This 177-nucleotide RNA was probed chemically with DMS. Source: RMDB library OK2TRN, as collected in RNAgym. The RNA was probed in 150 mM KOAc, 10 mM MgCl2 and 150 mM bicine (pH 8.5) at 24 C. Reactivities are rounded to 0.1 and cut off at 0 and 3.

RNA sequence: GGGAACGACUCGAGUAGAGUCGAAAAGGGAGAUUGCUUCCUACGGCGGAGACAUCUCGAAAUUUGUGCACCCUUCCGUCGCCGAGGCUAUCCGCAGCGAGUAGGGAAGCUCGACGCGCAGAGUUGCAAUGCCGCAAGACUUCGGUCUUGCGGCAUUAAAAGAAACAACAACAACAAC
Reactivity to DMS in 0.01 (KOAc 150mM, MgCl2 10mM, bicine 150mM(pH8.5), 24C), signal-to-noise 1, nucleotides 027 to 126: g030g000g010a120g010a190u010u000g040c020u000u000c010c000u000a080c100g010g010c040g020g020a040g000a150c300a090u010c050u010c070g000a080a030a140u000u000u010g010u000g050c020a160c000c040c100u010u020c030c020g030u000c010g000c100c070g000a070g010g040c070u000a200u000c100c000g000c000a130g010c080g010a210g010u020a090g010g000g000a070a040g010c000u000c090g000a130c190g000c070g030c130a040g010a200g020u000u010g000c120